[RMDB]
RNA sequence: GGGAACGACUCGAGUAGAGUCGAAAACGAUUUAACCGGGAUUUUAGCGUCAAGUAUUCACAGAGCCUAUUAAAGCCAAGCAGACAGUGACUGACAUUAAAAUUGCAACACAGAGUGCCGCUAAUAGCUGGUCAGUUCUAUUCGUAGAACUGACCAGAAAAGAAACAACAACAACAAC
Reactivity to DMS in 0.01 (KOAc 150mM, MgCl2 10mM, bicine 150mM(pH8.5), 24C), signal-to-noise 1, nucleotides 027 to 126: c080g000a090u000u030u030a050a080c080c010g000g020g020a120u000u000u000u030a030g040c070g000u000c080a010a120g040u000a110u000u000c010a000c080a100g000a150g000c010c000u000a140u000u000a030a060a150g040c080c050a030a120g000c100a040g020a030c140a000g000u000g000a090c040u000g000a040c100a060u000u000a000a010a060a110u010u010g000c030a050a040c000a030c120a090g000a120g030u010g010c040c040g000c030u000a030a190u000a070g010
Reactivity to 2A3 in 0.01 (KOAc 150mM, MgCl2 10mM, bicine 150mM(pH8.5), 24C), signal-to-noise 1, nucleotides 027 to 126: c020g010a010u060u030u180a070a070c150c030g010g050g040a030u080u080u010u120a040g000c040g000u010c020a000a100g000u010a160u060u050c000a020c010a130g100a010g050c000c020u110a160u250u170a160a050a020g050c030c000a010a000g000c000a050g010a120c010a030g030u040g060a000c030u030g050a000c010a050u010u120a050a090a040a000u060u080g000c010a020a030c030a000c030a020g110a010g080u040g000c010c000g000c020u040a060a000u100a270g050